RNA sequence: GGGAACGACUCGAGUAGAGUCGAAAACGCACACUGGGCUCGAUCUUGAGCACGACCUCCAGCUUAGUGUUCGCAUCGAUCCUGGAGCGAAUCGUCGUCGUGCAGACCUUCUCGUCGCCAACAUUGAAUUAGUAAAUUUAUUCGUAAAUUUACUAAUAAAAGAAACAACAACAACAAC
Reactivity to DMS in 0.01 (KOAc 150mM, MgCl2 10mM, bicine 150mM(pH8.5), 24C), signal-to-noise 8, nucleotides 027 to 126: c100g020c060a050c100a130c050u000g010g000g010c050u010c070g000a070u010c090u010u010g010a070g010c030a030c020g010a080c090c040u000c040c050a050g000c100u000u000a110g010u000g010u000u000c040g020c280a060u000c040g010a040u000c070c010u010g010g010a090g010c060g000a070a070u010c080g010u000c070g010u000c040g010u000g010c030a110g010a060c040c040u000u000c040u000c030g010u000c040g010c030c030a080a090c120a100u000u000g000a170
Reactivity to 2A3 in 0.01 (KOAc 150mM, MgCl2 10mM, bicine 150mM(pH8.5), 24C), signal-to-noise 6, nucleotides 027 to 126: c040g020c000a040c000a020c060u050g020g040g000c010u000c020g050a110u060c050u180u260g010a010g000c010a010c010g010a020c000c020u010c020c010a020g000c050u080u130a040g010u050g020u110u030c070g010c040a060u060c030g030a030u020c000c020u030g020g010a020g010c060g060a040a090u080c050g060u010c010g020u020c010g020u050g010c020a020g030a050c010c000u040u030c020u000c010g040u020c010g010c030c010a060a050c030a110u090u210g060a120